[RMDB]
Record summary:
Conditions: 150 mM KOAc, 10 mM MgCl2 and 150 mM bicine (pH 8.5), 24 C. This 177-nucleotide RNA was probed chemically with 2A3 and DMS. The data come from the RNA Mapping Database (RMDB), library OK2TST.
RNA sequence: GGGAACGACUCGAGUAGAGUCGAAAAUGGCGCUCCUGCGGCGCUAUAAACUGCAGGGUAAAAUUCAACACAACCAUAGAGGCAUUUUCAAUCGGGAACCUUAGAAUGUCUCCGAUGUGUAGCUCUAUGUCCAUACCGUUUUCGAACGGUAUGGACAAAAAGAAACAACAACAACAAC
Reactivity to 2A3 in 0.01 (KOAc 150mM, MgCl2 10mM, bicine 150mM(pH8.5), 24C), signal-to-noise 1, nucleotides 027 to 126: u130g050g010c000g000c000u020c000c000u000g050c030g090g000c030g000c000u060a040u120a150a040a000c000u070g000c000a000g020g000g000u060a060a140a040a060u140u130c010a030a140c000a050c030a160a150c050c010a030u010a020g010a010g100g040c060a040u030u000u070u200c220a120a030u020c000g000g050g000a030a040c030c060u020u030a060g060a300a040u130g000u000c000u110c050c000g060a010u000g050u080g030u080a090g000c000u000c000u060a060
Reactivity to DMS in 0.01 (KOAc 150mM, MgCl2 10mM, bicine 150mM(pH8.5), 24C), signal-to-noise 1, nucleotides 027 to 126: u010g010g000c070g010c080u000c010c010u000g000c020g020g020c010g000c010u010a040u020a020a090a050c020u000g000c010a020g000g030g000u010a020a100a140a100u030u020c120a060a100c120a040c100a030a080c130c060a040u000a020g010a020g000g010c060a070u000u000u010u020c200a080a020u000c080g000g010g000a040a020c050c110u000u010a140g000a110a150u000g000u000c030u000c000c010g030a040u000g020u000g000u000a100g000c000u000c000u000a070